An RNA of 177 nucleotides, treated with 2A3 and DMS and read out base by base. For 2A3, 1,170 sequencing reads were counted. For DMS the reverse transcriptase was MarathonRT. Reactivities are given for positions 27 through 126.
RNA sequence: GGGAACGACUCGAGUAGAGUCGAAAAGUCACCCUGCCGUGGGUGUCCAGCGGCAUCGUCGGUGCGGUGGUGCUAGGGCUUGGCCGUGCGCUGGGGGAGACGAUGGCGGUAGCCAUGGUGUCCGGCGUGCGCUGAAGGAUUUCGAUCCUUCAGCGCAAAAAGAAACAACAACAACAAC
Reactivity to 2A3 in 0.01 (KOAc 150mM, MgCl2 10mM, bicine 150mM(pH8.5), 24C), signal-to-noise 1, nucleotides 027 to 126: g040u010c000a060c040c000c000u050g060c030c080g080u160g060g050g060u090g050u030c030c000a030g070c020g020g000c000a020u070c060g210u050c080g100g230u140g160c030g000g120u110g080g200u030g010c000u030a120g030g000g080c000u050u060g140g010c010c040g110u090g000c060g000c010u050g020g020g000g010g060a070g040a030c040g020a000u010g000g000c010g110g100u150a020g060c010c000a040u040g030g040u030g080u070c000c060g000g000c030g050
Reactivity to DMS in 0.01 (KOAc 150mM, MgCl2 10mM, bicine 150mM(pH8.5), 24C), signal-to-noise 1, nucleotides 027 to 126: g000u000c040a060c010c000c010u010g020c050c070g040u000g000g020g030u000g010u000c000c020a080g020c050g010g010c010a020u000c070g030u000c050g030g030u010g000c150g010g000u010g000g000u020g010c020u010a120g020g010g000c050u000u000g020g020c060c070g020u000g010c050g000c010u000g030g030g000g010g010a080g010a050c010g020a060u010g000g000c010g030g030u020a080g010c020c020a030u000g000g010u020g000u000c010c020g020g010c050g040

For DMS, 1,957 sequencing reads were counted.